[RMDB]
RNA sequence: GGGAACGACUCGAGUAGAGUCGAAAAUGUUUCUGUCGUUCUUAGUAUAGCAUAUUUAUAAUGCGCUUACAUUUUCUUGCCAUGAAGAUAACAAUAUAUUGCUAAGAGUAAUUUCAUAAGAGAAUGCCAACAAUACAGGGUUCGCCCUGUAUUGUUGAAAAGAAACAACAACAACAAC
Reactivity to DMS in 0.01 (KOAc 150mM, MgCl2 10mM, bicine 150mM(pH8.5), 24C), signal-to-noise 3, nucleotides 027 to 126: u010g000u010u000u000c010u000g020u000c030g020u000u000c000u000u000a090g020u010a110u010a090g000c000a040u000a110u020u010u010a130u020a120a060u000g000c070g000c120u000u000a100c050a030u000u000u000u000c020u000u000g020c190c180a030u000g000a060a020g000a130u010a060a080c080a060a080u000a110u000a090u000u010g010c030u000a050a100g010a140g000u000a040a060u010u010u010c030a050u000a040a080g010a070g010a040a000u000g000c220
Reactivity to 2A3 in 0.01 (KOAc 150mM, MgCl2 10mM, bicine 150mM(pH8.5), 24C), signal-to-noise 4, nucleotides 027 to 126: u070g000u000u010u010c020u030g030u030c020g000u020u000c010u010u040a080g020u080a110u100a110g000c010a010u080a100u100u180u060a240u210a210a080u050g000c060g020c040u030u080a020c010a040u060u070u040u030c000u010u030g040c030c000a030u050g030a030a030g060a170u130a130a000c030a070a010u070a020u030a050u170u150g010c000u050a080a000g040a020g110u020a030a070u040u060u040c040a030u060a120a010g010a000g000a060a010u050g060c010

Structure probing data (DMS and 2A3) for a 177-nucleotide construct. The reactions ran in a buffer of 150 mM KOAc, 10 mM MgCl2 and 150 mM bicine (pH 8.5), at 24 C. Values cover nucleotides 27 to 126. Reactivities are rounded to 0.1 and cut off at 0 and 3.